Overview:
This 177-nucleotide RNA was probed chemically with 2A3 and DMS. DMS adducts were read by reverse transcription with MarathonRT. 2A3 is a SHAPE reagent: it acylates the 2'-hydroxyl of flexible nucleotides of all four kinds.

[RMDB]
RNA sequence: GGGAACGACUCGAGUAGAGUCGAAAACCCUUAGCAUUCGUGCUAAGGGAAAUAACGGUCGGCUCAUGCAGGUAGUCGAAAAUGCUGCUCGACCUUUUGGUAAAAUCUGGCCGUUCGCGGCCAGAAAUAUCGUAGUGGUAUUCGUACCACUACGAUAAAAAGAAACAACAACAACAAC
Reactivity to 2A3 in 0.01 (KOAc 150mM, MgCl2 10mM, bicine 150mM(pH8.5), 24C), signal-to-noise 4, nucleotides 027 to 126: c010c000c000u000u000a010g010c020a040u030u040c200g080u070g000c000u010a000a010g000g000g020a030a080a030u140a050a010c050g020g030u010c010g000g000c030u030c130a030u180g020c000a010g100g070u200a040g140u120c040g060a080a010a000a010u080g010c020u030g000c020u050c080g010a000c000c000u010u080u040u050g050g030u110a030a040a020a110u030c010u010g000g010c020c010g020u040u040c280g010c010g080g000c000c010a000g000a000a000a000
Reactivity to DMS in 0.01 (KOAc 150mM, MgCl2 10mM, bicine 150mM(pH8.5), 24C), signal-to-noise 4, nucleotides 027 to 126: c000c000c000u010u010a000g010c000a030u000u010c190g010u000g000c000u000a000a010g000g000g000a020a030a030u000a080a060c200g010g000u000c000g000g010c060u000c070a060u010g010c060a080g000g000u010a060g020u020c140g000a050a050a100a070u000g000c080u000g000c040u010c020g010a030c010c010u000u000u000u000g010g010u010a070a100a100a110u000c000u000g000g010c000c000g020u010u010c170g040c010g010g000c000c000a000g000a010a040a090
Overview:
The 2A3 profile rests on 5,606 reads. The reactions ran in a buffer of 150 mM KOAc, 10 mM MgCl2 and 150 mM bicine (pH 8.5), at 24 C.